[RMDB]
This 177-nucleotide RNA was probed chemically with 2A3 and DMS. For 2A3, 5,883 sequencing reads were counted. For DMS, 2,544 sequencing reads were counted. DMS adducts were read by reverse transcription with MarathonRT. Conditions: 150 mM KOAc, 10 mM MgCl2 and 150 mM bicine (pH 8.5), 24 C.

RNA sequence: GGGAACGACUCGAGUAGAGUCGAAAAGAUAUGGAGAGCUUCUCUAGCGUGAGCGAAGAACAUAUGAAGAAGGCUAUCGGAAACGAUAGUUGUAAAGUAUGGGAGCUUCGGGAGCUCUCCUAAGUCAGAUAUGUUAGGUGUUCGCACCUAACAUAUCAAAAGAAACAACAACAACAAC
Reactivity to 2A3 in 0.01 (KOAc 150mM, MgCl2 10mM, bicine 150mM(pH8.5), 24C), signal-to-noise 3, nucleotides 027 to 126: g030a020u050a040u140g010g020a010g020a000g000c050u150u020c090u090c150u170a120g120c100g250u300g150a040g080c080g180a300a000g040a090a010c010a000u030a000u040g010a110a300g000a010a000g010g000c000u000a000u020c010g040g000a100a000a030c010g000a000u010a010g030u020u060g000u000a000a000a000g000u000a000u030g020g050g020a020g000c000u020u070c030g000g000g000a010g040c010u020c000u000c000c000u000a010a010g010u020c050a020
Reactivity to DMS in 0.01 (KOAc 150mM, MgCl2 10mM, bicine 150mM(pH8.5), 24C), signal-to-noise 4, nucleotides 027 to 126: g030a060u020a300u000g010g000a010g010a020g000c010u000u000c000u010c120u020a140g050c170g020u010g010a080g030c080g020a070a130g000a140a190c000a010u000a000u000g010a040a160g020a230a300g030g000c010u000a000u000c000g000g000a130a100a260c010g010a010u000a020g000u000u000g000u000a040a090a300g000u000a000u000g000g000g020a120g010c040u000u000c140g000g000g000a010g000c010u000c000u000c000c000u000a000a040g000u000c080a180